[RMDB]
RNA sequence: GGGAACGACUCGAGUAGAGUCGAAAAGAUAUGGACGCUGCAGGACAUGCUGGUGGUUCGGAAACGAACCUAACAGCAACAGCCUGUCAGCGUCCUAAGUCAAAACUAAUCGGUUCGCCGAUUAGAAUCAUAAUCCCUACUUCGGUAGGGAUUAUGAAAAAGAAACAACAACAACAAC
Reactivity to 2A3 in 0.01 (KOAc 150mM, MgCl2 10mM, bicine 150mM(pH8.5), 24C), signal-to-noise 3, nucleotides 027 to 126: g000a000u030a020u100g000g000a000c000g000c000u000g000c000a000g000g020a080c110a240u300g010c010u010g000g040u030g010g000u020u010c010g000g020a030a030a000c010g010a010a020c010c010u040a300a090c000a000g020c040a130a050c080a060g020c000c000u030g020u180c010a000g000c000g010u020c000c000u000a000a000g000u000c010a010a000a020a050c010u010a000a000u020c000g020g130u090u060c300g080c100c000g000a010u010u000a000g020a010a020
Reactivity to DMS in 0.01 (KOAc 150mM, MgCl2 10mM, bicine 150mM(pH8.5), 24C), signal-to-noise 4, nucleotides 027 to 126: g000a030u000a190u020g000g020a010c010g010c000u000g000c000a010g010g000a050c120a170u010g030c010u000g020g000u010g010g010u000u000c000g010g000a050a040a120c010g010a010a000c000c000u000a050a130c000a010g000c000a080a070c300a200g000c000c000u000g000u010c030a000g020c000g010u000c000c000u000a010a070g000u010c030a130a070a120a210c010u010a000a010u000c010g010g010u010u010c300g030c000c000g010a010u000u000a000g000a110a110
Chemical mapping of a 177-nucleotide RNA with 2A3 and DMS. For DMS the reverse transcriptase was MarathonRT. The reactions ran in a buffer of 150 mM KOAc, 10 mM MgCl2 and 150 mM bicine (pH 8.5), at 24 C. Source: RMDB library TTRDES, as collected in RNAgym. For 2A3 the reverse transcriptase was SuperScript II with manganese.